[RMDB]
RNA sequence: GGGAACGACUCGAGUAGAGUCGAAAAGGGCCGUUCACUGGAUCCGAAGCCUCUAGAAGGAUAAUAUAGGCACUCCAUACCCUACUCCGACUCAAUACGUCCCCUUCGUACAGAAUGGUAACAUAUCGAACACAACCUAACUUCGGUUAGGUUGUAAUCAUACGGGCCAGUUCGCUGGCCCGUAUGAAAAAGAAACAACAACAACAAC
Reactivity to 2A3 in 0.01 (KOAc 150mM, MgCl2 10mM, bicine 150mM(pH8.5), 24C), signal-to-noise 1, nucleotides 027 to 156: g060g000g030c060c020g150u210u120c210a150c190u010g000g000a170u200c000c000g000a050a000g000c060c000u050c150u140a190g080a200a120g070g010a030u080a290a140u170a210u030a100g010g000c020a020c070u090c020c020a120u100a070c000c000c000u000a010c030u000c070c070g030a030c010u000c000a020a020u050a190c010g000u000c000c000c050c000u000u060c010g070u060a010c000a090g040a150a230u020g020g000u160a150a000c000a060u140a070u160c060g090a020a030c010a000c000a090a000c010c000u010a000a050c000u030u080c100g050g000u000u000a000g000g000u000u000g000u000a000a000